The data come from the RNA Mapping Database (RMDB), library OK1LIB. Structure probing data (DMS and 2A3) for a 177-nucleotide construct.
RNA sequence: GGGAACGACUCGAGUAGAGUCGAAAACUCUGACUGCUGUGGGGGACUAGGAGGGCAGGAGCUGAAGCAAGGAGACUGGUUUAGGAGAUGGCAGCUGCCCCCAGGGCUGAGCAGUGGUGGCUCAGGCCGGUGCAGUACGCUUCGGCGUACUGCACCGAAAAGAAACAACAACAACAAC
Reactivity to DMS in 0.01 (KOAc 150mM, MgCl2 10mM, bicine 150mM(pH8.5), 24C), signal-to-noise 1, nucleotides 027 to 126: c050u000c010u020g000a120c010u030g070c020u010g000u000g000g010g000g000g020a050c110u030a100g000g000a060g010g000g040c030a090g020g010a090g020c010u000g000a090a050g000c080a080a070g010g000a120g000a060c050u000g000g020u040u010u020a030g020g020a050g000a060u030g000g000c010a090g030c050u020g060c010c010c000c010c000a110g000g000g000c000u010g000a060g000c010a050g010u030g000g030u000g000g010c010u000c040a030g030g020c040
Reactivity to 2A3 in 0.01 (KOAc 150mM, MgCl2 10mM, bicine 150mM(pH8.5), 24C), signal-to-noise 3, nucleotides 027 to 126: c030u030c040u100g050a080c030u030g040c000u010g070u120g060g060g000g030g050a050c010u050a130g080g060a120g000g110g000c000a030g020g100a040g020c070u080g080a040a000g060c030a040a000g000g030a020g060a080c030u080g040g080u140u150u230a120g050g110a120g010a060u070g080g010c050a080g050c080u050g000c010c000c000c030c020a070g020g020g020c000u030g050a020g040c030a010g040u090g030g040u040g060g000c020u000c020a030g060g040c020
The RNA was probed in 150 mM KOAc, 10 mM MgCl2 and 150 mM bicine (pH 8.5) at 24 C. Reactivities are rounded to 0.1 and cut off at 0 and 3.